This 207-nucleotide RNA was probed chemically with DMS and 2A3. For 2A3, 1,958 sequencing reads were counted. Conditions: 150 mM KOAc, 10 mM MgCl2 and 150 mM bicine (pH 8.5), 24 C. 2A3 adducts were read by reverse transcription with SuperScript II with manganese.
RNA sequence: GGGAACGACUCGAGUAGAGUCGAAAAGGGUGAUGUCUCCUAACCUUUAUCAAUGGGGGCACUCGGUCGUGCUGUGGGUAGAAAUUUUAUUUCGUGCCUACCUUAGACGCUUGUCGUCUGGAGUAUGUGGGACUGAUGAACUUCGGUUCAUCAGUAAUCCUAUAACGUUCUUCGGAACGUUAUAGGAAAAAGAAACAACAACAACAAC
Reactivity to DMS in 0.01 (KOAc 150mM, MgCl2 10mM, bicine 150mM(pH8.5), 24C), signal-to-noise 2, nucleotides 027 to 156: g000g030g010u000g020a070u010g030u000c010u010c010c020u000a110a070c050c040u000u000u000a130u000c090a080a120u020g050g060g030g010g040c020a070c020u000c020g020g010u000c040g000u000g010c030u000g020u000g010g070g020u000a230g010a050a070a070u000u000u010u010a080u000u030u000c010g010u010g040c000c030u000a030c000c060u000u000a020g000a030c010g030c040u000u000g010u000c020g020u000c000u000g010g000a040g030u000a050u000g000u000g000g010g000a090c010u000g000a030u000g010a010a000c000u000u000c300g040g010u000u000c000a010u000c000a000g010u010a020a100
Reactivity to 2A3 in 0.01 (KOAc 150mM, MgCl2 10mM, bicine 150mM(pH8.5), 24C), signal-to-noise 3, nucleotides 027 to 156: g060g000g000u080g010a060u050g010u000c010u000c020c000u030a080a090c000c010u170u230u130a180u100c070a040a120u180g000g000g020g000g000c010a000c000u000c030g010g000u010c010g030u020g040c080u060g020u050g010g000g000u040a010g100a000a040a010u140u140u110u150a140u050u160u030c030g020u060g000c000c000u000a010c000c000u030u060a000g000a000c000g010c050u150u240g130u300c010g010u000c010u010g040g020a050g050u080a070u170g070u160g020g040g010a000c000u000g000a000u000g000a000a000c000u010u030c100g080g010u000u000c000a000u000c000a000g000u000a000a010